RNA sequence: GGGAACGACUCGAGUAGAGUCGAAAAUGUUUGCUUGGAGUAUUUUUCCACCGGAUAUCCGUGGAAAUCCUACAGCUAAUACGUAGCCAAUCCUUUAGGGGAUGUAGCAUAUUAGUUUGAACAAUCGGCUAUUAGCGUAGUUCGCUACGCUAAUAGCAAAAGAAACAACAACAACAAC
Reactivity to DMS in 0.01 (KOAc 150mM, MgCl2 10mM, bicine 150mM(pH8.5), 24C), signal-to-noise 3, nucleotides 027 to 126: u000g000u010u000u020g010c170u000u010g000g020a070g020u000a030u010u010u000u000u010c000c000a000c120c110g010g010a300u030a090u060c020c010g020u000g000g000a010a000a040u010c040c020u030a080c090a040g000c000u000a010a010u000a000c170g000u010a170g020c130c130a180a040u010c000c010u000u000u040a080g020g010g000g010a020u000g010u000a130g000c000a160u000a000u000u010a030g010u000u010u020g000a080a090c120a070a100u040c110g000
Reactivity to 2A3 in 0.01 (KOAc 150mM, MgCl2 10mM, bicine 150mM(pH8.5), 24C), signal-to-noise 4, nucleotides 027 to 126: u090g040u000u050u080g060c080u020u030g060g010a050g010u130a130u100u040u010u030u000c010c010a010c040c060g000g020a130u200a120u200c010c020g010u000g000g000a000a020a020u030c000c020u010a080c020a000g000c000u000a000a000u020a030c100g050u080a040g040c040c000a050a100u020c000c000u080u050u170a190g000g010g010g000a000u020g050u040a030g010c020a010u000a000u030u000a030g020u020u090u170g070a050a010c030a090a050u110c050g120